The record gives the reactivity of an RNA of 177 nucleotides to DMS. DMS adducts were read by reverse transcription with MarathonRT. Conditions: 150 mM KOAc, 10 mM MgCl2 and 150 mM bicine (pH 8.5), 24 C. Reactivities are given for positions 27 through 126.

RNA sequence: GGGAACGACUCGAGUAGAGUCGAAAAGGCCAAAACUGUUUUGCCGGACUUGUUGACUAAGAUGUCCCUUAGUUGCUCUAGAGUGCAUUCAUCGACGUUUUCUUGGAAAUGUUUUUCAAAGUUAGUAGGUCUUUACAAUUUUCGAAUUGUAAAGACCAAAAGAAACAACAACAACAAC
Reactivity to DMS in 0.01 (KOAc 150mM, MgCl2 10mM, bicine 150mM(pH8.5), 24C), signal-to-noise 2, nucleotides 027 to 126: g000g020c040c050a040a070a080a130c120u010g010u000u000u000u010g010c020c020g010g000a100c100u010u010g010u010u000g020a030c020u000a020a130g010a060u000g000u000c090c040c010u020u000a060g020u010u000g030c060u010c050u020a050g010a060g000u000g010c050a110u000u010c040a130u000c040g010a060c070g000u010u000u010u010c030u000u010g020g020a060a040a100u000g010u000u000u010u000u000c040a050a070a110g010u010u010a040g020u010a100